[RMDB]
Chemical mapping of a 177-nucleotide RNA with 2A3 and DMS. Source: RMDB libraries RFM100 and RFMREP, as collected in RNAgym. The reactions ran in a buffer of 150 mM KOAc, 10 mM MgCl2 and 150 mM bicine (pH 8.5), at 24 C. For 2A3 the reverse transcriptase was SuperScript II with manganese. DMS adducts were read by reverse transcription with MarathonRT.
RNA sequence: GGGAACGACUCGAGUAGAGUCGAAAAUGCAAUCGGGUUGAACACUUAAUUGGGUUAAAACGGUGGGGGACGAUCCCGUAACAUCCGUCCUAACGGCGACAGACUGCACGGCCCUGCCUCUUAGGUGUUAAUACCUUGGGUUCGCCCAAGGUAUUAAAAAAGAAACAACAACAACAAC
Reactivity to 2A3 in 0.01 (KOAc 150mM, MgCl2 10mM, bicine 150mM(pH8.5), 24C), signal-to-noise 5, nucleotides 027 to 126: u120g000c030a010a040u070c020g010g010g060u050u120g090a090a030c020a010c100u090u120a060a080u160u080g070g000g030u070u090a090a040a030a040c020g020g020u040g060g050g000g000g000a010c030g040a050u080c010c010c000g020u030a010a020c020a090u040c010c010g050u040c010c000u040a130a020c030g040g010c000g020a010c030a060g060a020c000u050g020c050a020c060g060g000c010c000c010u030g000c000c000u010c020u040u070a030g030g000u030g010
Reactivity to DMS in 0.01 (KOAc 150mM, MgCl2 10mM, bicine 150mM(pH8.5), 24C), signal-to-noise 7, nucleotides 027 to 126: u020g010c070a060a050u010c040g010g000g000u010u010g000a060a070c060a040c050u010u010a060a080u020u000g010g000g010u010u020a030a050a070a090c070g000g010u000g000g010g000g000g000a090c110g000a090u010c020c010c010g010u030a070a090c130a060u030c030c010g000u010c030c030u000a080a110c120g000g010c050g010a060c090a090g010a050c080u000g000c070a050c060g000g000c020c010c020u000g000c020c010u010c080u010u020a050g000g010u000g020